[RMDB]
This 177-nucleotide RNA was probed chemically with DMS and 2A3.
DMS adducts were read by reverse transcription with MarathonRT.
2A3 adducts were read by reverse transcription with SuperScript II with manganese.
Values cover nucleotides 27 to 126.
Source: RMDB library OK1LIB, as collected in RNAgym.
RNA sequence: GGGAACGACUCGAGUAGAGUCGAAAACUCGAAAGAGACCUGCAUAUCUUAGGCAGAUGAACAAGUCACGUCUGAAAAGCGAAAGCCCUAAGAUAUGCAGCUGUGAAGACUUGACGCAGAAAAUAAAACGGCGUAUAUACUUCGGUAUAUACGCCGUAAAAGAAACAACAACAACAAC
Reactivity to DMS in 0.01 (KOAc 150mM, MgCl2 10mM, bicine 150mM(pH8.5), 24C), signal-to-noise 1, nucleotides 027 to 126: c000u060c000g000a080a120a090g000a000g000a040c300c070u000g010c000a000u000a000u000c000u000u000a000g000g030c000a000g000a010u000g070a020a180c000a010a020g000u010c000a300c140g020u050c000u030g000a100a070a170a220g060c000g000a080a090a080g000c040c000c000u000a000a000g020a030u000a000u000g060c000a000g000c020u020g020u000g000a100a200g030a000c000u000u000g000a290c000g000c000a010g010a070a000a070a030u000a060a010a070
Reactivity to 2A3 in 0.01 (KOAc 150mM, MgCl2 10mM, bicine 150mM(pH8.5), 24C), signal-to-noise 2, nucleotides 027 to 126: c000u000c000g020a020a070a000g100a000g020a090c010c020u000g000c000a000u000a000u010c000u000u000a010g000g010c000a000g010a030u020g000a070a040c020a000a010g040u010c020a020c140g010u000c000u000g080a200a170a120a020g030c010g030a100a010a030g000c000c000c010u000a030a000g010a000u000a000u000g000c010a000g000c000u000g010u000g020a070a040g000a010c000u010u000g010a010c010g000c010a000g120a040a070a080a030u250a020a110a030